Structure probing data (DMS) for a 177-nucleotide construct. Source: RMDB library OK2TRN, as collected in RNAgym.
RNA sequence: GGGAACGACUCGAGUAGAGUCGAAAAGAGGAUUCCGAAGAGAAGGAAACUUGGUUGCCAGCCAGUAAGAAAAAUCAUGUUCCUGCGCCAAACGUCAUUCUCCGCAGCGCUUUAUUUGGUAUGGUUAGAGAAGGUCUAAGUUCGCUUAGACCUUCUCAAAAGAAACAACAACAACAAC
Reactivity to DMS in 0.01 (KOAc 150mM, MgCl2 10mM, bicine 150mM(pH8.5), 24C), signal-to-noise 1, nucleotides 027 to 126: g000a040g030g010a160u000u020c020c020g050a100a100g030a130g000a100a080g020g020a040a030a090c110u000u010g000g000u010u000g020c050c020a070g000c010c030a050g010u000a070a140g020a030a050a050a030a100u020c090a110u000g020u000u000c000c000u000g000c080g000c020c090a020a080a080c120g000u000c070a060u000u000c020u000c040c050g010c110a100g010c090g000c030u000u000u010a010u000u000u000g010g020u000a070u000g000g000u010u020a160